[RMDB]
RNA sequence: GGGAACGACUCGAGUAGAGUCGAAAACACAACUCAUUCGGGCGAUGACGGUCUCUUCUUUGAGGCUGAAGAUGGUGAAUGUGGUAUAGAGGAGGAGGAUCCAUCAUUGGGUGUGACGGUGCGUGGCCGUAUUUAGGUCGUUCGCGACCUAAAUACGAAAAGAAACAACAACAACAAC
Reactivity to 2A3 in 0.01 (KOAc 150mM, MgCl2 10mM, bicine 150mM(pH8.5), 24C), signal-to-noise 2, nucleotides 027 to 126: c040a000c010a000a100c030u050c050a100u180u130c050g030g070g000c030g130a060u080g070a040c010g000g000u000c000u010c000u180u080c060u190u280u160g020a000g000g000c020u010g010a010a000g060a030u080g000g030u040g030a130a070u080g000u010g110g010u060a080u090a140g100a040g050g010a010g010g030a020g030g030a050u030c060c000a030u040c030a060u100u150g050g010g020u060g020u050g060a030c020g010g020u050g030c020g020u050g030g000c000
Reactivity to DMS in 0.01 (KOAc 150mM, MgCl2 10mM, bicine 150mM(pH8.5), 24C), signal-to-noise 4, nucleotides 027 to 126: c080a080c110a050a110c070u010c030a100u000u000c070g040g020g020c070g000a080u000g020a230c060g000g010u000c010u010c020u000u020c190u010u000u010g000a030g000g000c020u000g010a070a130g010a060u000g020g020u010g000a040a060u010g000u000g010g020u010a110u010a090g010a080g000g000a110g000g000a080g000g000a110u000c020c020a080u000c100a090u000u000g010g020g020u010g010u010g010a040c060g010g010u000g000c090g020u000g010g020c070

Source information: This 177-nucleotide RNA was probed chemically with 2A3 and DMS. The 2A3 profile rests on 2,500 reads. The DMS profile rests on 4,379 reads. For DMS the reverse transcriptase was MarathonRT. The data come from the RNA Mapping Database (RMDB), library OK2TST.